[RMDB]
Source: RMDB library TTRDES, as collected in RNAgym. Chemical mapping of a 177-nucleotide RNA with 2A3 and DMS. For DMS the reverse transcriptase was MarathonRT. 2A3 adducts were read by reverse transcription with SuperScript II with manganese. The reactions ran in a buffer of 150 mM KOAc, 10 mM MgCl2 and 150 mM bicine (pH 8.5), at 24 C.

RNA sequence: GGGAACGACUCGAGUAGAGUCGAAAAGAUAUGGACGACGAGUGGACAUGCUCGAUUGGAUCGGAAACGAUCUAAAGAGCAACAGCCACCCAUCGUCCUAAGUCAAAAUCAUGCCUUCGGGCAUGAAGUAUUGAGCGUAGUUCGCUACGCUCAAUACAAAAGAAACAACAACAACAAC
Reactivity to 2A3 in 0.01 (KOAc 150mM, MgCl2 10mM, bicine 150mM(pH8.5), 24C), signal-to-noise 3, nucleotides 027 to 126: g030a020u070a030u160g000g010a010c000g000a000c010g000a010g020u010g000g030a050c090a210u160g010c010u010c020g160a230u040u180g030g000a010u000c020g010g010a060a050a080c020g000a010u000c000u000a000a000a040g020a000g030c010a020a030c110a040g070c010c000a010c010c000c000a030u020c010g010u000c000c000u010a090a020g030u000c020a030a020a000a300u070c000a000u000g010c020c000u090u130c300g140g000g000c000a000u010g000a010a050
Reactivity to DMS in 0.01 (KOAc 150mM, MgCl2 10mM, bicine 150mM(pH8.5), 24C), signal-to-noise 4, nucleotides 027 to 126: g010a050u010a300u020g000g000a000c000g040a010c070g020a050g010u000g010g010a080c140a300u000g010c000u000c010g010a260u010u000g000g000a020u010c000g000g010a150a090a300c020g010a020u000c000u000a020a060a290g000a010g000c000a020a090c300a180g000c010c000a010c000c010c010a030u000c000g000u000c000c000u010a010a100g010u000c030a130a090a110a110u010c000a000u000g010c000c000u000u020c240g040g000g020c000a000u000g000a020a120